[RMDB]
RNA sequence: GGGAACGACUCGAGUAGAGUCGAAAACUCGGCAAAAGGCGGCAGUCCUCAGUGCUCUUACUCUUUCCUAUAAAGAGGAGACUGCUGGACUCGCCGCCCAAGCCCGAGCAUGGGCCCCAGUUCCGAACAAAUUACAUAGGUUCGCCUAUGUAAUUUGAAAAGAAACAACAACAACAAC
Reactivity to 2A3 in 0.01 (KOAc 150mM, MgCl2 10mM, bicine 150mM(pH8.5), 24C), signal-to-noise 2, nucleotides 027 to 126: c000u000c000g000g000c010a000a040a050a030g020g010c000g000g000c000a010g000u000c000c000u010c010a030g010u160g240c020u000c010u100u210a220c000u010c020u010u020u060c050c040u200a150u160a300a020a000g000a000g020g020a000g010a000c000u000g030c050u000g000g010a000c000u020c030g000c010c000g000c010c000c000a000a000g000c000c010c000g000a000g000c040a060u110g070g080g020c000c000c010c000a010g100u070u020c010c010g030a060a040
Reactivity to DMS in 0.01 (KOAc 150mM, MgCl2 10mM, bicine 150mM(pH8.5), 24C), signal-to-noise 4, nucleotides 027 to 126: c000u000c000g030g020c000a040a080a170a090g000g000c020g010g020c000a030g000u000c010c000u000c020a010g000u000g010c050u010c020u000u000a300c050u000c000u000u000u000c240c230u010a090u020a040a020a020g000a020g010g010a010g000a020c020u000g010c220u000g010g010a010c010u000c150g030c010c000g050c000c000c000a020a190g010c160c040c040g020a020g000c050a060u000g010g000g020c050c000c010c130a150g000u000u000c030c000g000a130a200